[RMDB]
RNA sequence: GGGAACGACUCGAGUAGAGUCGAAAAGCAAGGUGUCGCUGCUGGAGAGCGGCGGCCGCGCGGAGCAGCGCGACCCGGUCUCCCUCGUCUACGAGGCCCUGCGUGACGACGCCCAGCGCAGCGGCAACAGUCACCAAAUCUUCGGAUUUGGUGACUGAAAAGAAACAACAACAACAAC
Reactivity to DMS in 0.01 (KOAc 150mM, MgCl2 10mM, bicine 150mM(pH8.5), 24C), signal-to-noise 2, nucleotides 027 to 126: g010c150a140a160g010g000u000g030u000c000g010c000u000g040c010u000g030g010a050g020a060g000c000g010g030c150g040g030c050c010g010c020g010c010g020g010a180g020c190a180g020c000g020c030g030a040c010c000c020g000g000u000c000u000c010c000c140u000c020g020u000c020u030a020c060g000a100g010g020c040c040c010u010g000c000g010u000g000a080c030g030a040c120g030c030c070c060a140g020c180g010c000a000g000c010g010g010c020a060a120
Reactivity to 2A3 in 0.01 (KOAc 150mM, MgCl2 10mM, bicine 150mM(pH8.5), 24C), signal-to-noise 1, nucleotides 027 to 126: g080c060a070a060g180g000u010g010u030c010g010c020u010g000c030u060g010g010a010g020a030g070c010g030g010c050g020g040c060c010g000c000g010c000g010g130a160g170c290a010g000c030g010c000g030a030c000c010c000g050g150u040c000u000c000c030c000u020c030g010u050c030u140a040c000g020a030g040g120c010c020c010u040g000c000g010u000g010a000c010g010a020c060g060c040c040c000a020g100c070g000c030a000g010c000g000g010c000a010a010

The record gives the reactivity of an RNA of 177 nucleotides to DMS and 2A3. Conditions: 150 mM KOAc, 10 mM MgCl2 and 150 mM bicine (pH 8.5), 24 C. The 2A3 profile rests on 2,152 reads. The data come from the RNA Mapping Database (RMDB), library OK2TRN. The DMS profile rests on 1,988 reads. Reactivities are rounded to 0.1 and cut off at 0 and 3.